Chemical mapping of a 207-nucleotide RNA with 2A3 and DMS. For DMS the reverse transcriptase was MarathonRT. 2A3 adducts were read by reverse transcription with SuperScript II with manganese. The reactions ran in a buffer of 150 mM KOAc, 10 mM MgCl2 and 150 mM bicine (pH 8.5), at 24 C. Source: RMDB library OK3TST, as collected in RNAgym. Reactivities are rounded to 0.1 and cut off at 0 and 3.
RNA sequence: GGGAACGACUCGAGUAGAGUCGAAAAGCUACAAAUCCGGGCUGCACAUCGUCCCACAUGUCGGUCAUUUCGGACAGGACGAUUUGCGUUGACAGGUAGUCGAUGUCGGCGGCCAGCGAACCGAACGCACCGAAGUCACCGUUGCCACGGACGUCGAGCCAAGACAAAUAUUCGUAUUUGUCUUGGCAAAAGAAACAACAACAACAAC
Reactivity to 2A3 in 0.01 (KOAc 150mM, MgCl2 10mM, bicine 150mM(pH8.5), 24C), signal-to-noise 5, nucleotides 027 to 156: g050c030u060a060c070a030a050a070u030c030c010g020g010g020c020u070g000c000a010c010a020u010c010g010u020c000c050c000a080c060a090u220g020u030c040g020g050u080c170a170u110u140u150c050g040g030a030c030a040g040g010a010c000g010a020u010u000u020g020c010g000u040u070g050a040c040a060g000g060u050a070g060u110c020g020a070u060g060u090c020g070g040c030g020g020c040c050a040g030c010g040a060a060c040c020g010a040a020c020g010c080a030c000c020g060a100a010g020u030c010a010c070c030g080u080u070g000c010c020a130c030g040g000a010c010g050u080c050g020a010
Reactivity to DMS in 0.01 (KOAc 150mM, MgCl2 10mM, bicine 150mM(pH8.5), 24C), signal-to-noise 2, nucleotides 027 to 156: g020c060u010a110c040a040a060a130u000c020c010g000g020g010c010u010g030c000a090c050a080u000c020g030u010c040c010c030a110c140a130u030g000u000c010g010g040u000c200a240u000u000u000c040g010g000a230c120a130g010g010a090c010g030a020u000u000u000g000c000g020u000u000g010a040c040a070g020g030u000a090g010u000c060g000a040u000g020u000c040g040g010c020g000g010c000c040a090g020c060g000a090a100c030c030g000a040a100c070g000c080a140c110c060g000a060a110g010u010c030a080c090c030g040u010u000g010c010c040a130c060g010g000a040c060g000u000c050g000a250